[RMDB]
RNA sequence: GGGAACGACUCGAGUAGAGUCGAAAAGGCCAGCCUGCGGGCCAACCGCGCCACCACCGAUCGCGAUGUAACGCAACUCACCCCGCGUGAGCGCGAUAUUCUGAAGCUCAUCGCGCAGGGAUUGCCGCCGUGGCGCUCCAUUCGUGGAGCGCCACGGAAAAGAAACAACAACAACAAC
Reactivity to 2A3 in 0.01 (KOAc 150mM, MgCl2 10mM, bicine 150mM(pH8.5), 24C), signal-to-noise 1, nucleotides 027 to 126: g000g000c010c000a000g020c000c010u050g010c040g000g010g000c000c000a000a020c000c000g100c000g000c000c000a040c000c040a070c000c000g000a060u150c000g060c000g060a000u000g010u140a070a080c040g000c070a100a110c040u000c050a180c030c000c000c010g000c000g000u000g000a080g000c060g060c020g030a040u000a110u300u060c040u190g070a060a000g020c040u040c000a060u140c030g000c010g000c030a080g000g000g000a060u100u170g010c000c110g060